[RMDB]
RNA sequence: GGGAACGACUCGAGUAGAGUCGAAAAGUACAGGUGACAUCAAGGGAGACAAAGAGUUCAUGAACUAGAAUCCUACUGCAGGAGGCCUCACGGAGUCUACAGCAAGAGUCAGUGACGGAUUCAAAGAACUGCACAAAGACUUCGGUCUUUGUGCAGUAAAAGAAACAACAACAACAAC
Reactivity to DMS in 0.01 (KOAc 150mM, MgCl2 10mM, bicine 150mM(pH8.5), 24C), signal-to-noise 1, nucleotides 027 to 126: g040u000a040c070a060g040g000u000g030a150c070a030u000c110a110a090g050g040g000a090g020a080c150a190a050a050g020a110g020u000u000c070a120u020g010a010a060c060u000a080g000a110a110u000c050c000u000a080c080u010g000c110a050g000g020a020g000g020c020c050u000c210a070c190g020g000a010g030u000c030u000a030c020a100g000c190a050a140g000a050g000u000c020a000g020u000g000a170c030g010g030a050u000u000c070a040a190a150g000a090